[RMDB]
RNA sequence: GGGAACGACUCGAGUAGAGUCGAAAAGUGCUUGAGCUUUCAGGCAGAACUGGCCUGGCAAAUUCAAGGAGCAGCAAGGAGGCCAGAGUGUGGGAGUGACAGGAGUGAGAGGGGGAGUAGCAAGAUGGCUACUGAUAGCAUUCGUGCUAUCAGUAGCAAAAGAAACAACAACAACAAC
Reactivity to DMS in 0.01 (KOAc 150mM, MgCl2 10mM, bicine 150mM(pH8.5), 24C), signal-to-noise 3, nucleotides 027 to 126: g040u000g010c010u000u010g000a070g000c180u000u020u000c030a000g010g030c030a110g010a090a140c120u010g010g010c010c000u020g010g000c080a070a040a120u000u010c100a050a070g010g000a090g000c080a080g020c080a090a140g000g000a070g000g030c030c060a050g000a070g000u010g000u000g010g010g010a100g020u000g010a050c130a060g000g000a050g020u010g000a050g010a120g040g000g000g000g000a060g010u000a070g000c070a110a090g000a070u010g010
Reactivity to 2A3 in 0.01 (KOAc 150mM, MgCl2 10mM, bicine 150mM(pH8.5), 24C), signal-to-noise 2, nucleotides 027 to 126: g090u060g000c020u020u030g010a060g020c050u050u190u110c010a000g000g000c010a010g050a110a080c150u110g020g000c000c010u000g070g020c020a000a040a180u130u060c020a050a040g000g060a030g030c040a010g020c010a080a120g060g010a020g010g080c000c010a030g010a040g070u120g000u090g020g030g000a080g010u070g010a040c020a030g040g030a050g040u060g030a060g020a060g030g000g010g010g000a030g020u050a020g000c050a030a030g120a090u130g170